This 177-nucleotide RNA was probed chemically with DMS. It was measured as part of the RMDB library OK1LIB. The RNA was probed in 150 mM KOAc, 10 mM MgCl2 and 150 mM bicine (pH 8.5) at 24 C. For DMS, 16,328 sequencing reads were counted.
RNA sequence: GGGAACGACUCGAGUAGAGUCGAAAAUGGUGUUAAGUGGAAUAAGUGGAAAAAUAUACAUAUAUGUACAGGGGGCUACAUAUAUGUAUAUGCCCCCUCGUUAAAGUAUAAGUAGGUAUAAGGUGGAGAUGACCAUAAUAUUCGUAUUAUGGUCAUCAAAAGAAACAACAACAACAAC
Reactivity to DMS in 0.01 (KOAc 150mM, MgCl2 10mM, bicine 150mM(pH8.5), 24C), signal-to-noise 5, nucleotides 027 to 126: u010g000g020u010g010u000u000a060a130g020u010g010g000a090a050u020a060a090g010u010g010g010a040a070a080a090a050u010a020u000a010c000a030u010a010u010a030u000g000u020a030c060a080g010g000g000g020g010c110u000a030c060a030u020a050u020a030u020g010u000a020u010a020u020g000c050c000c000c010c020u000c020g000u010u020a040a070a110g000u010a020u010a010a100g020u020a030g000g020u010a060u020a030a080g010g010u010g010g010a290

Reactivities are given for positions 27 through 126.